[RMDB]
RNA sequence: GGGAACGACUCGAGUAGAGUCGAAAAGAUGAUUCCGUGGUCCUCUGUAGCGACUACCGUCAGAGCCGCAAUGCAGCGGCCCUGAUUGCAGGUUGCGGGCUCAAACUGAAGGUUGAUUAUCGCCCCAAGACUCUGUAGGAUUCGUCCUACAGAGUCUAAAAGAAACAACAACAACAAC
Reactivity to DMS in 0.01 (KOAc 150mM, MgCl2 10mM, bicine 150mM(pH8.5), 24C), signal-to-noise 2, nucleotides 027 to 126: g000a070u000g010a110u000u010c040c050g020u020g000g020u000c030c010u010c120u010g030u010a120g010c030g030a040c030u010a080c080c110g030u000c010a020g000a030g010c000c000g010c010a110a110u010g010c240a110g010c020g010g020c020c010c000u000g000a010u000u000g040c100a140g010g000u010u000g010c040g020g010g000c050u010c080a030a090a090c090u000g000a080a110g020g000u010u010g020a090u000u010a070u010c060g000c110c000c000c100a110
Reactivity to 2A3 in 0.01 (KOAc 150mM, MgCl2 10mM, bicine 150mM(pH8.5), 24C), signal-to-noise 2, nucleotides 027 to 126: g030a020u050g000a020u080u000c020c020g000u110g000g030u030c000c020u110c110u150g100u230a010g010c020g060a040c040u050a050c010c040g010u020c000a020g000a000g000c000c030g000c020a080a210u300g060c080a030g000c040g020g020c040c000c000u010g000a020u040u140g000c030a020g050g040u040u060g010c030g000g000g000c030u060c090a040a050a130c090u130g090a130a020g080g020u100u080g030a070u030u060a040u100c000g010c000c000c000c000a020